Chemical mapping of a 177-nucleotide RNA with 2A3 and DMS. The RNA was probed in 150 mM KOAc, 10 mM MgCl2 and 150 mM bicine (pH 8.5) at 24 C.
RNA sequence: GGGAACGACUCGAGUAGAGUCGAAAAUAAACAAUGUACGGCAUGGAGUCCCCCGCCAUCACUCAUGAAGAAGCUCUUGCUAUGAUCAAAGACUGCGGUGUGACUAUCAACAUCAAGUGCAGCAAAAGCAUUAAUCAUGGUUCGCCAUGAUUAAUGCAAAAGAAACAACAACAACAAC
Reactivity to 2A3 in 0.01 (KOAc 150mM, MgCl2 10mM, bicine 150mM(pH8.5), 24C), signal-to-noise 1, nucleotides 027 to 126: u090a030a080a000c060a030a100u080g040u060a050c030g030g020c100a060u050g020g010a040g060u000c020c010c000c000c010g010c020c010a060u050c010a010c010u060c000a040u070g040a050a060g030a030a020g030c030u050c010u070u040g010c000u030a040u210g030a010u110c040a060a000a000g030a090c000u010g010c010g000g000u040g000u010g010a000c010u060a120u200c050a050a050c000a020u020c010a050a140g030u030g070c010a010g030c030a030a020a030a020
Reactivity to DMS in 0.01 (KOAc 150mM, MgCl2 10mM, bicine 150mM(pH8.5), 24C), signal-to-noise 2, nucleotides 027 to 126: u000a060a030a150c160a110a060u000g000u000a130c080g000g030c050a040u000g000g000a090g000u000c010c020c030c020c040g030c060c070a010u000c170a120c100u010c110a030u000g000a070a100g000a090a060g010c030u000c070u000u010g020c030u000a080u000g010a080u030c170a060a090a100g010a060c070u010g000c020g020g020u000g000u000g020a100c070u010a060u010c090a050a100c050a010u000c040a030a070g000u000g030c030a080g000c100a060a100a080a100
The DMS profile rests on 1,424 reads.